[RMDB]
RNA sequence: GGGAACGACUCGAGUAGAGUCGAAAAUGCCUAAGCCAUAGCCCUUUUAAAUAAAAUAGCAAAUGGAAAAUCAGAAUCCCUUUCUAUCGCAAAAUAAGAGUCCAGAUUACAUAACUCAUUGUAUGUGUUUUCACUUGGAUGAGAGAAUAGAGAGUAACCUAAAUUUACUCUUCGGAGUAAAUUUAGGAAAAGAAACAACAACAACAAC
Reactivity to DMS in 0.01 (KOAc 150mM, MgCl2 10mM, bicine 150mM(pH8.5), 24C), signal-to-noise 1, nucleotides 027 to 156: u000g030c010c010u030a220a300g000c050c000a050u000a160g000c000c000c030u080u000u000u000a020a150a200u030a090a080a120a160u000a080g000c050a030a180a100u000g000g040a140a050a040a090u010c040a160g000a140a210u000c010c000c030u010u000u000c030u010a060u000c010g000c140a010a010a140a170u000a100a160g000a260g000u000c010c030a070g010a080u060u060a090c010a090u000a040a100c050u000c090a120u000u000g040u010a050u000g030u000g000u000u000u000u000c060a040c050u000u030g000g080a040u000g030a160g000a100g000a000a000u000a050g000a160g000a090g000u000a120a180
Reactivity to 2A3 in 0.01 (KOAc 150mM, MgCl2 10mM, bicine 150mM(pH8.5), 24C), signal-to-noise 1, nucleotides 027 to 156: u100g020c010c010u050a120a040g070c000c000a100u020a010g010c000c020c040u000u200u040u020a130a090a150u180a030a040a040a030u090a020g030c020a000a000a170u040g040g000a140a110a000a070u050c020a010g070a030a210u040c000c000c000u000u030u030c000u060a050u010c060g000c060a090a000a000a090u070a140a000g000a010g080u000c000c000a060g000a110u050u070a020c010a050u110a110a040c000u040c130a050u050u130g040u090a080u040g000u000g000u000u030u020u140c050a040c030u010u030g070g000a010u060g040a020g000a010g000a070a030u100a050g000a000g020a000g040u050a000a020

Chemical mapping of a 207-nucleotide RNA with DMS and 2A3. The data come from the RNA Mapping Database (RMDB), library OK3TST. Reactivities are given for positions 27 through 156. The RNA was probed in 150 mM KOAc, 10 mM MgCl2 and 150 mM bicine (pH 8.5) at 24 C.